[RMDB]
RNA sequence: GGGAACGACUCGAGUAGAGUCGAAAAAAUGCCGCCGACCGCAUCUUCUCGUCGCCGACGGUGGUUGAUGGCAUCGUGUACGUCGGCAGCGAUGACAGUUCCCUGUAUGCGAUCGAUGCCGCCACCGGGAAUGAAAUCUUUGAGUUUACGAAUGCCACUCCCAAAUAGUAUUCGUACUAUUUGGGAGAAAAGAAACAACAACAACAAC
Reactivity to DMS in 0.01 (KOAc 150mM, MgCl2 10mM, bicine 150mM(pH8.5), 24C), signal-to-noise 1, nucleotides 027 to 156: a070a060u000g020c000c010g000c030c000g010a050c020c060g000c030a070u000c050u010u000c050u000c060g050u010c070g010c040c060g010a040c000g000g010u000g000g030u000u010g000a090u000g000g030c000a050u000c010g040u020g020u000a050c050g040u000c010g000g060c000a080g000c000g000a080u020g000a160c080a190g010u000u000c010c000c020u020g020u010a090u000g010c020g000a140u010c030g000a070u000g040c000c020g000c000c020a030c020c030g000g000g020a110a060u000g020a070a070a070u000c060u010u010u030g000a140g010u010u000u000a130c100g000a150a080u000g010c080c040a140
Reactivity to 2A3 in 0.01 (KOAc 150mM, MgCl2 10mM, bicine 150mM(pH8.5), 24C), signal-to-noise 1, nucleotides 027 to 156: a010a000u130g020c010c010g080c020c000g050a000c050c050g050c020a040u010c030u140u110c070u040c020g100u070c010g010c030c070g020a100c010g000g030u030g000g020u020u100g220a170u160g000g000c000a000u000c000g010u030g050u040a080c070g000u030c000g040g000c020a010g010c090g180a140u170g100a020c060a080g060u050u010c000c000c000u000g040u050a060u110g020c010g010a020u030c010g000a000u030g010c000c000g000c000c000a000c000c010g010g010g010a040a050u200g070a060a020a120u090c050u110u090u120g100a100g070u060u100u030a100c100g030a080a000u000g000c000c000a000